The data come from the RNA Mapping Database (RMDB), library M2RFPK. This 207-nucleotide RNA was probed chemically with 2A3.
[RMDB]
RNA sequence: GGGAACGACUCGAGUAGAGUCGAAAAGGCAAUAACGAACUAAUUCUAAGCAAGUAAUGGAGAAAUGCCAGGGUCACUAUCUAGCCAUAAUUGUGCUUGACAGUAUGAUACUAACUGAACAAUAAGUAAAAGCGCUGGUACUUCGGUACCAGCGCAACUUCUUUUUAAAGUUCGCUUUAAAAAGAAGAAAAGAAACAACAACAACAAC
Reactivity to 2A3 in 0.01 (KOAc 150mM, MgCl2 10mM, bicine 150mM(pH8.5), 24C), signal-to-noise 1, nucleotides 027 to 156: g040g000c030a060a150u110a100a010c070g010a010a030c060u030a000a110u120u100c030u100a060a050g010c010a050a000g080u230a090a060u150g020g000a140g030a050a000a060u100g000c000c000a060g090g000g000u010c000a000c090u030a060u080c030u060a030g000c010c000a050u070a080a120u220u050g060u100g030c030u000u020g010a000c000a000g150u100a050u010g100a060u040a050c030u020a100a000c010u020g030a030a000c030a080a090u130a150a000g070u070a130a000a030a180g060c020g110c000u000g010g000u000a000c000u030u080c150g030g000u000a000c000c010a000g000c000g010c000a000a000

For 2A3, 453 sequencing reads were counted. Values cover nucleotides 27 to 156. The RNA was probed in 150 mM KOAc, 10 mM MgCl2 and 150 mM bicine (pH 8.5) at 24 C. For 2A3 the reverse transcriptase was SuperScript II with manganese.